[RMDB]
Chemical mapping of a 177-nucleotide RNA with 2A3 and DMS.
DMS adducts were read by reverse transcription with MarathonRT.
The RNA was probed in 150 mM KOAc, 10 mM MgCl2 and 150 mM bicine (pH 8.5) at 24 C.
RNA sequence: GGGAACGACUCGAGUAGAGUCGAAAAGAUAUGGAAUCCGCAGAUAUCGCGAAGUAGGAUAUCGGAAACGAUAUUUAUGAUGUAGGAUUCCUAAGUCAAAAGAGGAAUUUGUUCGCAAAUUCCUCAACUCCUAUGUAUUCUUCGGAAUACAUAGGAGAAAAGAAACAACAACAACAAC
Reactivity to 2A3 in 0.01 (KOAc 150mM, MgCl2 10mM, bicine 150mM(pH8.5), 24C), signal-to-noise 5, nucleotides 027 to 126: g010a010u020a010u060g000g010a000a010u010c010c000g000c050a030g140a220u300a060u300c090g060c110g200a140a020g030u120a030g040g160a010u030a020u040c000g000g010a010a020a000c000g000a000u000a010u020u100u030a160u190g130a040u050g040u180a300g040g000a000u000u000c000c000u000a020a020g010u010c030a000a040a060a180g030a000g000g000a010a010u010u010u020g010u020u020c090g010c170a010a000a000u010u010c000c000u000c000a000a010
Reactivity to DMS in 0.01 (KOAc 150mM, MgCl2 10mM, bicine 150mM(pH8.5), 24C), signal-to-noise 4, nucleotides 027 to 126: g000a020u000a150u010g010g000a020a000u000c000c000g010c050a130g010a120u010a050u000c060g010c170g010a090a130g010u010a070g000g010a020u000a010u000c000g010g000a030a030a060c000g010a010u000a010u000u000u000a040u010g000a080u000g010u000a070g050g010a030u000u000c000c010u000a020a110g010u000c020a080a080a110a120g000a030g010g000a020a010u000u010u000g010u000u010c230g010c010a010a010a010u000u000c000c000u000c000a040a070